[RMDB]
RNA sequence: GGGAACGACUCGAGUAGAGUCGAAAAAGCACGUCUGGCUCACUGAGAAACAGCCAAGCCAGCAGGCACUUCUGGCCCCAUGGGGUUGGUCUGCGUGGGGGAAGGGUGUGUGGCCCAUGUGCUGUGGGCAUUUUGAAUGAUUCGUCAUUCAAAAUGCAAAAGAAACAACAACAACAAC
Reactivity to DMS in 0.01 (KOAc 150mM, MgCl2 10mM, bicine 150mM(pH8.5), 24C), signal-to-noise 7, nucleotides 027 to 126: a060g010c020a030c050g010u000c020u000g010g000c010u000c300a100c060u010g010a170g000a140a100a140c040a020g000c040c070a090a100g010c000c000a030g010c080a100g000g010c010a020c040u000u010c030u000g010g010c010c000c010c020a040u000g020g000g010g010u010u010g010g010u010c030u000g010c020g030u000g010g000g000g000g010a180a050g000g000g000u000g000u000g010u000g010g000c020c020c060a090u000g000u000g010c020u000g010u010g000g010
Reactivity to 2A3 in 0.01 (KOAc 150mM, MgCl2 10mM, bicine 150mM(pH8.5), 24C), signal-to-noise 5, nucleotides 027 to 126: a000g010c010a010c030g040u030c040u040g000g010c010u040c050a050c030u070g060a040g140a270a190a050c020a010g020c040c030a020a000g030c010c000a010g000c010a010g080g020c010a010c050u300u200c040u130g220g000c000c010c020c000a030u060g000g020g010g100u150u190g170g060u180c010u140g120c040g050u040g000g000g010g000g030a020a070g030g000g000u040g010u030g040u040g050g000c000c000c000a000u060g010u030g000c030u030g030u070g030g080